[RMDB]
RNA sequence: GGGAACGACUCGAGUAGAGUCGAAAACGGAAGUUGGUUCGUCAAGGAACAACCAGCGCGGGGUCGGUUCCGGUUGCCACAGUUGCGCUAACACACGGGCGAGUUGAACCCGCUGUUGCUCGCCUCCUGAUAACUUGCGGUUCGCCGCAAGUUAUCAAAAAGAAACAACAACAACAAC
Reactivity to DMS in 0.01 (KOAc 150mM, MgCl2 10mM, bicine 150mM(pH8.5), 24C), signal-to-noise 2, nucleotides 027 to 126: c040g010g000a060a100g030u000u000g000g010u000u000c120g020u000c080a090a140g030g010a040a000c060a080a040c000c070a060g040c000g040c080g020g000g000g010u010c070g010g000u000u010c020c000g030g020u000u000g010c100c040a110c230a080g000u030u010g020c060g010c090u000a060a060c160a090c160a050c220g000g000g000c020g020a040g020u000u000g030a130a120c010c020c050g010c070u000g010u000u010g000c010u000c030g000c020c000u000c190c090
Structure probing data (DMS) for a 177-nucleotide construct.
It was measured as part of the RMDB library OK2TST.
Reactivities are given for positions 27 through 126.